The data come from the RNA Mapping Database (RMDB), library M2PK90. An RNA of 177 nucleotides, treated with DMS and 2A3 and read out base by base. The RNA was probed in 150 mM KOAc, 10 mM MgCl2 and 150 mM bicine (pH 8.5) at 24 C. Values are in units of 0.01, from 0 to 300, in steps of 10. The DMS profile rests on 1,441 reads.
RNA sequence: GGGAACGACUCGAGUAGAGUCGAAAAGUAGUGCUCGAGAGGGAGGCUGUCUCGCAGAGCUUUUAGAUCUUCUGAUCUUUCCCUCCUCCAUAUCGCUUAUGCGUCAUGCGAUAGACGCAUAAUUAAAGCUACAUUUCCGAUUCGUCGGAAAUGUAGCAAAAGAAACAACAACAACAAC
Reactivity to DMS in 0.01 (KOAc 150mM, MgCl2 10mM, bicine 150mM(pH8.5), 24C), signal-to-noise 1, nucleotides 027 to 126: g010u000a070g020u000g020c070u000c040g000a030g000a230g010g020g000a050g020g030c120u010g000u010c020u000c020g050c070a040g000a170g010c000u010u010u000u000a010g000a010u010c000u020u020c250u000g000a010u010c010u010u000u010c000c000c000u000c010c000u010c000c010a110u000a070u000c040g010c250u000u000a010u000g000c000g010u010c000a060u020g040c300g000a090u010a070g010a010c010g000c000a010u010a000a040u010u000a050a050a080
Reactivity to 2A3 in 0.01 (KOAc 150mM, MgCl2 10mM, bicine 150mM(pH8.5), 24C), signal-to-noise 1, nucleotides 027 to 126: g040u080a010g100u030g090c040u040c070g060a070g000a020g050g080g060a040g120g000c060u090g140u050c010u000c040g030c040a020g070a000g060c000u010u030u010u030a000g000a000u000c010u220u040c130u300g000a020u000c000u020u010u000c000c000c000u010c000c000u030c000c000a050u110a030u070c040g000c100u030u030a000u020g030c010g000u000c020a050u110g040c030g220a100u060a200g010a000c000g000c010a000u010a010a000u020u040a060a050a010